Structure probing data (DMS) for a 177-nucleotide construct. DMS adducts were read by reverse transcription with MarathonRT.

[RMDB]
RNA sequence: GGGAACGACUCGAGUAGAGUCGAAAAAAAGAUAUGGACCGAAACAAAGUUCAACAGCCUGGCGUAACAUCAGCUCGGAAACGAGCUGUGGCCAGGACAUGAACAAAAAAUCGGUCCUAAGUCAAAAUCAGUGUAUGAACUUCGGUUCAUACACUGAAAAAGAAACAACAACAACAAC
Reactivity to DMS in 0.01 (KOAc 150mM, MgCl2 10mM, bicine 150mM(pH8.5), 24C), signal-to-noise 1, nucleotides 027 to 126: a170a080a090g000a020u000a300u000g000g000a030c050c050g000a010a040a050c180a260a110a090g000u000u000c000a010a070c200a170g020c000c000u010g000g000c010g000u030a070a130c220a040u010c010a000g000c000u000c000g030g020a030a070a230c030g030a000g000c000u000g000u000g000g010c010c000a000g000g020a020c150a090u000g000a030a030c010a000a020a080a130a140a050u020c000g000g000u000c000c000u000a020a100g000u000c030a050a110a110a100
Background: It was measured as part of the RMDB library TTRDES.